[RMDB]
Structure probing data (2A3 and DMS) for a 177-nucleotide construct. For 2A3, 5,974 sequencing reads were counted. Source: RMDB library TTRDES, as collected in RNAgym.

RNA sequence: GGGAACGACUCGAGUAGAGUCGAAAAGAUAUGGAUCUUACAGGGAGCGGAUAGUCGGAAACGACUAAUCGCAUCGAUCUGUUGGAUCCUAAGUCAAAAGGCGAUGGAUCUUCGGAUCCAUCGCCAACGGAUAUCAAUGGUUCGCCAUUGAUAUCCGAAAAGAAACAACAACAACAAC
Reactivity to 2A3 in 0.01 (KOAc 150mM, MgCl2 10mM, bicine 150mM(pH8.5), 24C), signal-to-noise 2, nucleotides 027 to 126: g010a010u020a010u040g010g020a000u030c010u020u010a020c010a000g080g120g090a220g050c000g040g000a020u000a000g000u000c000g000g000a000a010a020c020g000a000c020u010a020a070u050c000g030c010a060u210c130g110a200u010c000u010g000u000u010g000g010a010u020c010c000u000a010a000g010u000c000a000a030a110a280g010g000c020g010a010u020g000g030a020u030c030u130u240c300g050g000a000u000c000c030a000u000c000g000c000c000a000a010
Reactivity to DMS in 0.01 (KOAc 150mM, MgCl2 10mM, bicine 150mM(pH8.5), 24C), signal-to-noise 2, nucleotides 027 to 126: g000a030u000a080u010g000g010a030u000c010u000u010a000c010a020g000g010g030a140g040c000g020g020a100u000a020g000u010c010g000g000a010a030a060c010g010a000c000u000a020a030u010c010g010c000a300u000c300g010a090u000c000u000g000u000u000g010g000a010u010c000c000u000a010a090g000u000c010a100a090a100a140g020g000c000g000a040u000g010g000a000u000c010u000u040c280g020g010a000u000c000c000a000u000c010g010c000c000a000a010